[RMDB]
RNA sequence: GGGAACGACUCGAGUAGAGUCGAAAAGCGUUGAUGCAGGCGACCGGGAUGGUCGACGACCAUAUCCAAGCAUGCUGGGUGCCCACUGAGCGACCUUUUGACCAGCCGGGCUGCCCGAUGGCGGCCCUCACUCUCAGGUAUUCGUACCUGAGAGUGAAAAAGAAACAACAACAACAAC
Reactivity to 2A3 in 0.01 (KOAc 150mM, MgCl2 10mM, bicine 150mM(pH8.5), 24C), signal-to-noise 3, nucleotides 027 to 126: g050c030g030u080u050g070a080u120g040c070a030g030g020c040g060a040c050c080g020g040g060a060u090g010g030u040c060g100a140c110g010a010c000c010a030u070a100u150c020c020a030a030g050c020a040u100g000c010u070g050g040g000u040g020c030c000c010a030c060u070g050a040g050c030g030a070c010c000u060u090u090u110g080a080c020c030a000g080c080c040g010g010g000c020u020g010c010c040c050g210a110u300g000g000c000g000g000c000c000c000
Reactivity to DMS in 0.01 (KOAc 150mM, MgCl2 10mM, bicine 150mM(pH8.5), 24C), signal-to-noise 5, nucleotides 027 to 126: g010c050g010u000u010g010a090u010g020c040a070g000g000c030g020a080c210c150g000g000g000a050u000g010g020u000c010g010a150c200g010a080c030c020a030u000a080u010c040c030a110a140g020c070a050u010g010c020u000g010g000g030u000g000c020c020c030a100c080u000g000a080g010c040g000a090c080c030u000u000u000u000g000a090c040c020a100g000c110c110g000g000g010c000u000g000c000c000c300g020a080u000g020g020c010g010g010c000c000c010